[RMDB]
RNA sequence: GGGAACGACUCGAGUAGAGUCGAAAAAGUAUCUAAUUCGUUAGAUACUCGGGGACGGGUGAGGCGGCCGUGUGCGCAGACAGUGCUCCACCCGCGCGCGCGAAUUUCGCCUAUUCGUAGGCGAAAAAACAGGUAUCAAUUUCGAUUGAUACCUGUUAAAAGAAACAACAACAACAAC
Reactivity to 2A3 in 0.01 (KOAc 150mM, MgCl2 10mM, bicine 150mM(pH8.5), 24C), signal-to-noise 1, nucleotides 027 to 126: a000g000u000a000u000c000u000a040a000u080u080c140g040u070u000a000g000a000u010a000c000u000c030g010g000g000g060a020c050g030g030g020u060g020a090g000g060c070g000g030c060c060g030u080g040u050g020c070g000c010a020g090a200c050a030g130u030g090c020u040c000c030a000c000c000c020g000c020g030c000g000c010g000c000g040a050a050u030u010u010c000g000c000c000u000a020u010u030c110g060u020a010g000g000c000g010a020a000a000a000
Reactivity to DMS in 0.01 (KOAc 150mM, MgCl2 10mM, bicine 150mM(pH8.5), 24C), signal-to-noise 3, nucleotides 027 to 126: a010g020u000a000u000c000u010a010a030u000u010c160g020u000u000a010g000a020u000a000c000u000c020g010g000g020g020a150c050g000g000g020u000g000a070g020g020c040g010g010c060c050g020u000g010u000g020c050g010c040a100g010a060c120a070g010u000g000c020u000c050c020a050c050c010c020g010c050g000c060g010c040g000c080g000a110a160u010u000u000c000g020c000c000u000a010u000u010c170g010u000a010g010g000c000g010a000a010a010a040